[RMDB]
RNA sequence: GGGAACGACUCGAGUAGAGUCGAAAAACCUUUGUGCUCAGGGAGCUUGGAACUACAAGUUGACUUACCCAUUGGGUAAGUCUUUAAGCUUGCCAAGCAUCGAUCUGAGCACUCUGGUAAAGGUCAAUCUCUGGUGUUCGCACCAGAGAUUGACCAAGGUGUGGUAACUGUUCGCAGUUACCACACCAAAAGAAACAACAACAACAAC
Reactivity to 2A3 in 0.01 (KOAc 150mM, MgCl2 10mM, bicine 150mM(pH8.5), 24C), signal-to-noise 1, nucleotides 027 to 156: a000c000c000u000u050u000g010u000g000c000u000c000a000g000g040g000a000g010c000u010u010g030g000a040a080c090u090a070c300a030a020g020u100u070g070a000c010u010u010a000c010c020c110a300u110u300g000g020g000u000a000a000g010u000c020u000u050u000a020a000g020c000u000u010g020c000c000a000a010g000c000a090u260c000g060a070u000c000u000g000a030g000c000a000c000u020c000u000g020g000u050a190a030a100g020g000u000c000a000a000u000c010u000c000u030g000g040u010g000u100u050c300g030c150a000c000c000a000g000a000g000a000u000u010g000a000c000c000a000a000

This 207-nucleotide RNA was probed chemically with 2A3.
The data come from the RNA Mapping Database (RMDB), library RNAMAK.
The 2A3 profile rests on 993 reads.
The RNA was probed in 150 mM KOAc, 10 mM MgCl2 and 150 mM bicine (pH 8.5) at 24 C.